The data come from the RNA Mapping Database (RMDB), library OK2TST. Chemical mapping of a 177-nucleotide RNA with DMS and 2A3. The reactions ran in a buffer of 150 mM KOAc, 10 mM MgCl2 and 150 mM bicine (pH 8.5), at 24 C. DMS adducts were read by reverse transcription with MarathonRT. Values are in units of 0.01, from 0 to 300, in steps of 10.

[RMDB]
RNA sequence: GGGAACGACUCGAGUAGAGUCGAAAACAGCGGACGAUCUCCGGCUGCUCGUCGAGAUCGACGAUCUUCGGCACGUCGUCGUUGUGCCGCUCGACGUCGGUGACCUGGGUGAUCAGCACCGCAUGGAAAAAUGAUUAUAGUUCGCUAUAAUCAUUUUAAAAGAAACAACAACAACAAC
Reactivity to DMS in 0.01 (KOAc 150mM, MgCl2 10mM, bicine 150mM(pH8.5), 24C), signal-to-noise 9, nucleotides 027 to 126: c040a080g010c000g010g010a180c080g000a030u000c020u000c010c010g000g010c020u000g010c040u000c020g010u000c010g000a030g010a070u000c010g010a020c020g010a030u000c060u000u000c090g010g010c090a100c300g000u000c060g010u000c040g010u000u000g010u000g010c070c080g010c030u000c010g000a020c010g000u010c190g010g010u000g000a050c030c010u010g050g010g000u010g000a030u000c010a110g020c150a080c010c010g010c020a080u000g000g000a030
Reactivity to 2A3 in 0.01 (KOAc 150mM, MgCl2 10mM, bicine 150mM(pH8.5), 24C), signal-to-noise 9, nucleotides 027 to 126: c010a010g010c000g010g010a020c020g010a020u000c010u000c010c000g030g000c020u030g010c030u020c030g010u010c010g010a020g010a120u120c040g020a020c020g070a090u020c030u110u080c040g040g000c040a010c070g100u070c020g020u020c020g040u110u090g070u080g070c020c020g010c010u000c000g010a010c000g020u090c050g020g020u030g050a080c010c040u160g040g000g080u130g020a020u030c020a010g050c070a070c010c010g000c050a110u070g050g000a130